Chemical mapping of a 207-nucleotide RNA with 2A3 and DMS. For DMS, 2,074 sequencing reads were counted. 2A3 adducts were read by reverse transcription with SuperScript II with manganese. Conditions: 150 mM KOAc, 10 mM MgCl2 and 150 mM bicine (pH 8.5), 24 C.

[RMDB]
RNA sequence: GGGAACGACUCGAGUAGAGUCGAAAAUGGAUAUUGCAGGCUGGUGCGACCGCGACGUGCAUGCGCAUGAAAUAGUAGUGCGCUUCUUCUGAAUAGCAGGAAAGCUCCUUGAUCUUCUCCCAGACAGCCGGCUCCACGUCGUGCGGCUUUGCGGACGGAUAAUGCCAUGGUUCGCCAUGGCAUUAUCAAAAGAAACAACAACAACAAC
Reactivity to 2A3 in 0.01 (KOAc 150mM, MgCl2 10mM, bicine 150mM(pH8.5), 24C), signal-to-noise 2, nucleotides 027 to 156: u090g040g020a060u050a060u160u120g000c020a020g030g000c000u030g030g040u050g040c010g030a050c040c000g000c030g000a020c040g030u090g020c090a060u060g000c000g000c000a020u090g100a050a070a150u260a100g100u020a030g000u000g010c000g020c030u030u030c000u070u000c000u000g100a130a110u090a170g050c010a010g000g050a060a050a010g050c000u040c020c030u120u100g060a160u070c030u170u020c020u060c000c020c000a030g000a040c020a010g040c030c010g000g040c000u040c000c010a020c040g010u020c000g050u020g030c010g000g000c010u110u050u060g020c020g000g010a010c010g000
Reactivity to DMS in 0.01 (KOAc 150mM, MgCl2 10mM, bicine 150mM(pH8.5), 24C), signal-to-noise 1, nucleotides 027 to 156: u010g020g010a160u000a060u000u010g020c070a090g000g000c040u050g010g080u020g050c040g000a040c060c050g020c060g040a050c030g030u000g000c110a110u020g040c020g050c000a050u000g000a110a140a220u030a110g020u000a160g000u010g000c030g060c020u010u000c080u000u000c090u010g020a130a080u000a050g050c000a080g010g030a100a110a070g000c000u010c030c010u000u010g000a140u000c070u010u010c020u000c000c030c000a180g030a090c080a080g030c040c000g000g000c010u020c010c050a070c050g010u010c010g000u000g000c000g020g010c030u000u010u000g030c000g010g000a080c110g020